[RMDB]
RNA sequence: GGGAACGACUCGAGUAGAGUCGAAAAUGCAAGCUCUGGAAAUUCGUUAAUGUAUUUGAUGUCUUAGUGUUUUAGUGACUAGGGAGACCAUUAACUAGUUUAUCAUUAACCACUUAUCAGUGUAUUGACACUCUUCUUGAUUCGUCAAGAAGAGUGUAAAAGAAACAACAACAACAAC
Reactivity to 2A3 in 0.01 (KOAc 150mM, MgCl2 10mM, bicine 150mM(pH8.5), 24C), signal-to-noise 3, nucleotides 027 to 126: u150g000c020a040a040g000c020u020c020u050g000g070a030a070a030u070u070c040g010u010u020a040a010u040g070u090a090u090u080u140g050a050u070g050u010c020u010u030a050g000u000g090u070u120u040u110a140g040u090g050a010c000u000a010g040g020g030a050g050a000c000c000a000u060u010a020a020c030u000a040g030u020u050u060a140u060c010a000u040u030a030a040c020c010a020c060u070u070a080u160c050a040g030u020g020u060a220u090u070g020
Reactivity to DMS in 0.01 (KOAc 150mM, MgCl2 10mM, bicine 150mM(pH8.5), 24C), signal-to-noise 6, nucleotides 027 to 126: u000g010c110a070a100g000c030u000c040u020g000g000a050a040a070u010u010c180g010u000u000a030a020u000g000u000a080u010u000u010g010a090u010g010u000c040u000u000a050g020u010g010u010u020u010u010a130g030u000g010a030c030u010a090g010g000g020a080g010a120c210c060a040u000u000a070a090c070u000a060g000u000u010u010a080u010c030a030u000u000a040a100c250c040a050c080u000u000a070u000c080a050g010u000g010u000a130u000u000g000